[RMDB]
RNA sequence: GGGAACGACUCGAGUAGAGUCGAAAAAACUAAAGCAGAAUGACGCAUUUCAUUCAGUACCACAGGGCCAGAUCAUGGAUCAGACAUGGGAUAUUCAGACCUGAAGUCUAAUGUAAUUUGGAGACACGAAAUAGAUGAAAUCUUUACUACAGUGCGAUAUCGUACCUAAGUUCGCUUAGGUACGAUAAAAAGAAACAACAACAACAAC
Reactivity to 2A3 in 0.01 (KOAc 150mM, MgCl2 10mM, bicine 150mM(pH8.5), 24C), signal-to-noise 4, nucleotides 027 to 156: a000a030c170u250a090a020a010g050c030a030g010a030a040u020g030a020c030g010c050a070u070u080u000c030a020u030u020c040a030g040u040a040c020c020a050c040a140g000g010g030c020c000a030g000a050u060c010a030u050g060g000a060u090c060a030g020a040c010a030u090g010g020g010a030u040a110u100u140c050a010g070a110c020c030u080g050a040a010g010u000c010u020a070a020u060g030u050a060a120u080u050u070g060g000a050g030a010c010a010c080g040a060a090a030u070a020g040a030u020g020a020a100a070u050c020u040u120u080a040c050u030a030c030a030g040u020g030c010g020a040
Reactivity to DMS in 0.01 (KOAc 150mM, MgCl2 10mM, bicine 150mM(pH8.5), 24C), signal-to-noise 3, nucleotides 027 to 156: a080a050c050u000a080a060a100g020c060a120g020a030a030u000g010a080c130g010c120a160u010u010u000c010a070u010u000c030a150g030u000a080c040c010a060c060a100g000g000g010c020c020a090g010a090u000c030a050u000g030g010a090u010c060a080g020a090c030a110u010g020g000g010a090u000a120u000u010c090a090g000a080c040c020u000g010a090a100g020u000c010u000a060a080u010g000u010a020a090u010u000u000g000g010a120g000a110c040a180c050g030a060a060a110u010a080g000a070u000g010a060a080a180u000c020u020u010u000a080c040u000a050c060a080g010u000g000c030g010a180
An RNA of 207 nucleotides, treated with 2A3 and DMS and read out base by base. The 2A3 profile rests on 2,765 reads. The data come from the RNA Mapping Database (RMDB), library OK3TST. As a SHAPE reagent, 2A3 marks flexible, mostly unpaired nucleotides at the ribose 2'-OH. The reactions ran in a buffer of 150 mM KOAc, 10 mM MgCl2 and 150 mM bicine (pH 8.5), at 24 C. Values cover nucleotides 27 to 156. DMS (dimethyl sulfate) methylates the pairing face of unpaired adenines and cytosines.